[RMDB]
RNA sequence: GGGAACGACUCGAGUAGAGUCGAAAAUAUAGGCAUGAAAUGACAAAAUCAAAACAAACAAAACUGUGAGAGUGCCUCUAUGCUAAACAUCCUUGCAUCCUUACAUAACAUAAACAGACACAUUAAAAUAAUAAAUUCAUAAAAUAGGUACACAAUAACGCUAUGCAUAGUUCGCUAUGCAUAGCGUAAAAGAAACAACAACAACAAC
Reactivity to 2A3 in 0.01 (KOAc 150mM, MgCl2 10mM, bicine 150mM(pH8.5), 24C), signal-to-noise 2, nucleotides 027 to 156: u120a030u040a020g020g000c010a030u060g110a120a050a020u110g010a060c030a040a100a050a020u180c020a070a130a000a140c020a010a080a000c020a030a110a060a040c160u150g000u040g080a060g020a010g050u000g020c050c020u010c030u010a050u070g030c020u050a000a000a170c040a060u080c010c000u000u040g000c000a040u030c010c030u110u140a060c020a070u060a070a040c000a010u130a030a060a000c000a040g110a040c000a010c010a110u140u300a080a080a160a040u250a020a010u130a060a050a160u140u100c020a030u160a150a070a030a000u200a000g030g000u080a030c080a000c000a000a060u210a250
An RNA of 207 nucleotides, treated with 2A3 and read out base by base. It was measured as part of the RMDB library OK3TST. Values cover nucleotides 27 to 156. For 2A3, 763 sequencing reads were counted.